[RMDB]
Notes
Conditions: 150 mM KOAc, 10 mM MgCl2 and 150 mM bicine (pH 8.5), 24 C. This 177-nucleotide RNA was probed chemically with DMS. For DMS, 811 sequencing reads were counted. It was measured as part of the RMDB library M2PK50.

RNA sequence: GGGAACGACUCGAGUAGAGUCGAAAAGUGAGAACGUUCGCGUUCUCACAAAUUCUAAGACCGAAGCUUAGAUGGCCGACACUUCCCUUGGAAACGGCACAAAAAUGAUAGGUUUCGACCUAUCAAACAAAUGGGGUUUGUUCGCAAACCCCAUUUGAAAAGAAACAACAACAACAAC
Reactivity to DMS in 0.01 (KOAc 150mM, MgCl2 10mM, bicine 150mM(pH8.5), 24C), signal-to-noise 1, nucleotides 027 to 126: g000u000g030a000g000a020a000c000g030u000u020c300g030c000g010u000u010c000u000c000a000c010a020a060a070u010u000c000u000a000a020g000a130c070c070g010a080a140g000c000u000u000a000g000a060u000g000g000c040c000g020a230c110a140c130u000u000c020c000c000u000u000g000g030a150a080a110c030g000g040c010a140c290a020a020a060a080a060u010g000a010u000a010g010g020u020u000u000c180g000a000c000c000u000a000u000c020a010a070a220